[RMDB]
RNA sequence: GGGAACGACUCGAGUAGAGUCGAAAAGAUAUGGAGCAGCGGGAGUCCGAUGUCGGAAACGACAUCCAAGGGACGUUGAUCGCUGAACUACUCCUAAGUCAAAGUGUGAGACUUCGGUCUCACACAAGUCUAUUAGCUCCUUCGGGAGCUAAUAGACAAAAGAAACAACAACAACAAC
Reactivity to 2A3 in 0.01 (KOAc 150mM, MgCl2 10mM, bicine 150mM(pH8.5), 24C), signal-to-noise 1, nucleotides 027 to 126: g020a000u010a000u060g000g000a010g040c000a000g000c020g000g000g000a010g000u000c010c000g000a000u000g000u020c010g000g050a000a000a000c010g000a000c000a010u020c050c040a170a170g300g020g010a000c010g040u070u020g020a010u010c000g000c010u000g010a040a020c030u070a080c010u010c000c000u020a010a010g000u000c050a030a080a190g010u000g000u000g000a000g010a000c020u050u120c300g130g000u000c000u000c010a010c010a000c000a020a000
Reactivity to DMS in 0.01 (KOAc 150mM, MgCl2 10mM, bicine 150mM(pH8.5), 24C), signal-to-noise 2, nucleotides 027 to 126: g000a000u000a000u000g010g000a020g000c020a020g000c000g000g020g000a000g020u010c000c010g000a010u000g020u000c000g030g010a010a000a020c000g000a000c010a000u010c060c300a130a090g020g010g030a000c010g020u000u000g010a110u010c000g000c010u000g010a120a120c200u010a190c000u000c000c010u000a010a120g000u000c020a040a080a110g010u000g010u010g000a020g010a010c000u000u010c240g060g010u000c000u000c000a010c000a000c010a010a060
This 177-nucleotide RNA was probed chemically with 2A3 and DMS.
The RNA was probed in 150 mM KOAc, 10 mM MgCl2 and 150 mM bicine (pH 8.5) at 24 C.
The DMS profile rests on 1,690 reads.
For DMS the reverse transcriptase was MarathonRT.
For 2A3, 2,905 sequencing reads were counted.
Reactivities are given for positions 27 through 126.
Source: RMDB library TTRDEL, as collected in RNAgym.